This 177-nucleotide RNA was probed chemically with DMS and 2A3. The reactions ran in a buffer of 150 mM KOAc, 10 mM MgCl2 and 150 mM bicine (pH 8.5), at 24 C. For DMS the reverse transcriptase was MarathonRT. The 2A3 profile rests on 5,983 reads.

[RMDB]
RNA sequence: GGGAACGACUCGAGUAGAGUCGAAAAGAUAUGGAGCAGCUUUUGACGCGAGUAAAUCGGAAACGAUUUACAUCGCGAUAAGCUGCCUCCUAAGUCAAAGGGCAUUUAACUUCGGUUAAAUGCCCAACUGAUACGAAUUCUUCGGAAUUCGUAUCAGAAAAGAAACAACAACAACAAC
Reactivity to DMS in 0.01 (KOAc 150mM, MgCl2 10mM, bicine 150mM(pH8.5), 24C), signal-to-noise 3, nucleotides 027 to 126: g010a020u000a220u020g010g000a030g000c000a010g010c000u010u010u000u000g020a150c090g020c010g010a030g010u000a000a010a000u010c010g000g000a060a060a110c000g010a020u000u000u000a010c000a040u010c000g030c010g010a030u010a010a010g010c000u000g000c150c020u000c000c000u000a020a110g000u000c000a100a140a150g000g000g000c000a010u000u000u000a000a000c000u000u030c260g020g010u000u000a000a000a000u000g000c000c000c000a010a010
Reactivity to 2A3 in 0.01 (KOAc 150mM, MgCl2 10mM, bicine 150mM(pH8.5), 24C), signal-to-noise 3, nucleotides 027 to 126: g020a000u040a030u090g000g000a000g000c010a000g000c030u150u110u170u300g280a180c220g000c010g010a000g000u000a010a000a000u000c010g030g040a040a010a020c010g010a000u000u010u010a000c030a130u020c010g000c030g010a000u010a000a000g010c000u000g000c010c000u000c000c000u010a040a020g030u010c040a070a140a100g020g000g000c010a000u010u010u000a000a000c010u040u090c280g040g010u000u010a000a000a000u010g000c000c000c000a000a010